Overview: Chemical mapping of a 177-nucleotide RNA with 2A3 and DMS. The DMS profile rests on 919 reads. The data come from the RNA Mapping Database (RMDB), library M2PK50. For 2A3 the reverse transcriptase was SuperScript II with manganese.

RNA sequence: GGGAACGACUCGAGUAGAGUCGAAAAAGACUUGUAUUCGUACAAGUCUACAGAAAUUUCGCUAGCACACGAUCACACCUAGCGUUCUCAAUAACGAUCGAACAACGUGUCAAUUCGUUGACACGAAAUAACAAUUCUCCUUCGGGAGAAUUGUUAUAAAAGAAACAACAACAACAAC
Reactivity to 2A3 in 0.01 (KOAc 150mM, MgCl2 10mM, bicine 150mM(pH8.5), 24C), signal-to-noise 2, nucleotides 027 to 126: a020g000a010c000u010u020g000u040a030u030u100c170g000u010a000c000a000a000g020u000c000u020a020c000a060g220a050a190a110u020u020u020c010g000c020u000a000g020c020a030c010a000c110g010a000u030c010a040c000a050c100c000u000a000g010c000g000u020u000c020u000c000a020a050u150a060a030c120g000a000u040c000g010a070a040c050a040a050c010g000u000g000u020c000a000a020u010u090c180g060u110u010g010a000c010a000c000g000a030a030
Reactivity to DMS in 0.01 (KOAc 150mM, MgCl2 10mM, bicine 150mM(pH8.5), 24C), signal-to-noise 2, nucleotides 027 to 126: a020g000a020c000u020u000g020u000a010u000u020c180g010u010a000c000a010a010g010u010c000u000a080c190a150g020a060a150a100u000u000u000c000g000c020u010a000g020c230a120c120a100c020g010a010u010c010a160c190a130c170c000u000a000g010c000g010u000u000c000u000c000a060a050u020a050a080c160g010a020u010c010g010a170a130c210a040a240c000g010u030g000u000c020a010a090u000u010c130g020u000u000g020a010c010a000c000g000a020a080